Chemical mapping of a 207-nucleotide RNA with 2A3 and DMS. Source: RMDB library OK3TST, as collected in RNAgym. The 2A3 profile rests on 1,245 reads.
RNA sequence: GGGAACGACUCGAGUAGAGUCGAAAACAAUGGCCAAGACCCAGCAGCGACUUGGCUAACAGGCCCAGCCGAUGUGCAUGGGUGACCACGCGAUGCUCCUGACACACGCACUGGUGGCUUAGGGAAGUUUUUUUGAGGAUUGAUCAGAAGAUCUGAAGAAAAUAGGACGAUUCGUCGUCCUAUUUUCAAAAGAAACAACAACAACAAC
Reactivity to 2A3 in 0.01 (KOAc 150mM, MgCl2 10mM, bicine 150mM(pH8.5), 24C), signal-to-noise 2, nucleotides 027 to 156: c060a040a120u100g000g020c000c020a020a030g050a170c070c000c000a040g020c070a040g000c010g030a040c020u000u000g030g000c000u040a060a080c050a090g100g030c000c000c000a000g000c000c000g150a180u070g020u080g020c090a070u040g000g000g000u020g050a060c020c010a030c070g050c040g070a120u080g010c030u010c030c030u100g100a020c020a010c000a010c070g050c030a050c110u030g070g040u080g050g000c030u080u130a060g030g000g060a030a060g040u040u030u000u000u000u040u160g020a030g010g010a020u000u170g050a060u150c050a050g130a240a030g020a090u010c010u080g030a070a090
Reactivity to DMS in 0.01 (KOAc 150mM, MgCl2 10mM, bicine 150mM(pH8.5), 24C), signal-to-noise 1, nucleotides 027 to 156: c070a120a180u010g020g050c010c020a060a080g000a180c070c020c050a300g000c050a110g020c040g040a140c020u000u040g010g040c000u000a030a070c220a260g000g000c000c010c000a110g040c020c000g010a080u000g030u000g050c000a070u000g000g050g060u000g000a080c010c020a060c070g050c040g020a180u020g000c020u000c010c010u000g000a070c080a050c020a060c060g030c070a020c010u000g000g020u010g000g020c020u000u000a100g020g020g020a060a120g000u000u000u000u000u000u000u000g010a240g000g020a160u000u010g000a100u000c090a140g000a150a190g010a020u000c040u010g000a120a190